[RMDB]
RNA sequence: GGGAACGACUCGAGUAGAGUCGAAAACGGUCGUACAGGUGGCCUAUCCGGACGCCGUGGCCUACGCACGAUGGGCUGGUCGACGCCUACCGACCGAGGCCGAGUGGGAGUACGCGGCCCGUGGCGGUCUACUCGACAUAUUCGUAUGUCGAGUAGAAAAAGAAACAACAACAACAAC
Reactivity to 2A3 in 0.01 (KOAc 150mM, MgCl2 10mM, bicine 150mM(pH8.5), 24C), signal-to-noise 6, nucleotides 027 to 126: c020g010g050u110c050g050u150a090c040a150g000g070u050g060g090c010c030u040a120u070c040c020g010g020a020c030g000c020c010g020u040g040g030c010c030u040a050c060g040c030a070c070g120a110u100g000g100g000c020u040g050g060u100c030g000a030c020g040c010c010u020a030c020c000g030a030c010c010g040a110g050g000c010c000g010a040g020u060g010g100g010a080g050u080a050c040g000c000g020g000c000c000c000g000u060g020g010c020g000g010
Reactivity to DMS in 0.01 (KOAc 150mM, MgCl2 10mM, bicine 150mM(pH8.5), 24C), signal-to-noise 9, nucleotides 027 to 126: c090g000g010u000c020g040u000a070c110a100g020g010u000g010g010c100c060u010a080u000c080c050g000g000a060c050g010c020c010g020u000g000g000c030c020u000a060c070g010c090a080c090g010a080u000g010g010g000c010u000g000g010u010c060g010a070c060g000c020c010u010a060c070c010g000a040c010c020g010a110g020g010c000c000g000a080g020u000g000g010g020a140g010u000a050c030g010c050g000g010c000c010c020g010u010g010g010c020g000g000